[RMDB]
RNA sequence: GGGAACGACUCGAGUAGAGUCGAAAACGCGCCGUGCUCAGGAUCGCCUCGGACAGCUCCUCGGGACGCUGCCGCAUCGCCUCGGGUUCGAGCCGCAGGUCGGACAUGUUGCCGUUCUGGUCGACGGUCACCCGUACCGAGCCGUCCCGGCUGCUCGCACCAUACCUAAAUUCGUUUAGGUAUGGUGAAAAGAAACAACAACAACAAC
Reactivity to DMS in 0.01 (KOAc 150mM, MgCl2 10mM, bicine 150mM(pH8.5), 24C), signal-to-noise 2, nucleotides 027 to 156: c050g020c060g030c010c010g030u010g000c030u000c060a120g020g020a060u000c070g020c040c010u010c060g020g010a070c030a050g010c000u000c020c020u030c060g030g020g020a080c050g030c010u000g030c030c050g040c070a090u000c030g010c030c020u010c010g020g020g020u000u010c050g020a140g030c000c020g020c040a090g000g000u000c030g020g000a060c060a110u010g020u010u010g040c020c040g020u000u000c030u020g020g010u000c040g020a020c010g000g000u000c060a050c030c030c020g030u000a080c050c010g010a130g020c020c010g030u000c010c010c030g040g000c000u000g030c000u010c060g030
Reactivity to 2A3 in 0.01 (KOAc 150mM, MgCl2 10mM, bicine 150mM(pH8.5), 24C), signal-to-noise 5, nucleotides 027 to 156: c060g030c020g000c020c020g040u060g020c010u040c050a060g060g040a170u150c050g030c030c020u060c040g060g040a100c030a040g000c010u050c020c020u070c060g070g060g010a030c050g020c050u070g010c010c020g020c040a080u080c040g020c020c020u040c050g030g000g000u090u100c070g010a060g030c000c030g000c030a030g000g030u020c000g000g020a040c060a180u240g050u090u110g070c020c020g010u110u010c040u100g070g030u110c060g030a040c010g000g010u020c020a030c010c000c010g010u030a060c010c030g010a010g010c010c000g010u010c010c000c000g010g000c020u030g010c010u020c040g010